An RNA of 177 nucleotides, treated with 2A3 and DMS and read out base by base. The 2A3 profile rests on 2,235 reads. For 2A3 the reverse transcriptase was SuperScript II with manganese. DMS adducts were read by reverse transcription with MarathonRT. The RNA was probed in 150 mM KOAc, 10 mM MgCl2 and 150 mM bicine (pH 8.5) at 24 C.

RNA sequence: GGGAACGACUCGAGUAGAGUCGAAAAGAUGGCACAAGUAAGAAUGUCAUGCGUCAACCAUGGAACGUUUCCAAUCACAGAAUUACCAACAUAGUCAGAGGUACUGAUGACCCCGCUCCUCAGGGGAAUGAACUAGGAGUUUCGACUCCUAGUUCAUAAAAGAAACAACAACAACAAC
Reactivity to 2A3 in 0.01 (KOAc 150mM, MgCl2 10mM, bicine 150mM(pH8.5), 24C), signal-to-noise 3, nucleotides 027 to 126: g040a010u040g010g050c030a030c010a090a070g170u150a040a090g080a090a100u090g000u070c000a000u100g050c020g080u000c010a040a050c020c030a050u070g040g020a060a080c030g010u030u060u060c030c000a020a050u070c020a020c000a110g130a090a120u080u040a030c000c000a030a070c020a120u130a050g080u120c030a030g040a030g080g050u040a060c020u050g090a160u060g020a020c020c000c000c020g030c020u030c000c010u050c060a020g010g000g000g040a000
Reactivity to DMS in 0.01 (KOAc 150mM, MgCl2 10mM, bicine 150mM(pH8.5), 24C), signal-to-noise 3, nucleotides 027 to 126: g030a070u000g020g030c040a070c130a090a090g010u020a110a090g000a090a120u010g020u000c030a030u000g010c080g020u000c070a060a070c090c030a080u010g010g020a070a110c090g010u010u000u010c040c030a100a100u010c040a070c080a030g010a110a060u000u000a040c040c030a080a080c140a060u000a100g010u010c080a040g020a150g010g000u010a060c050u010g010a080u010g000a150c000c000c000c030g020c060u000c030c020u000c090a200g000g010g000g000a090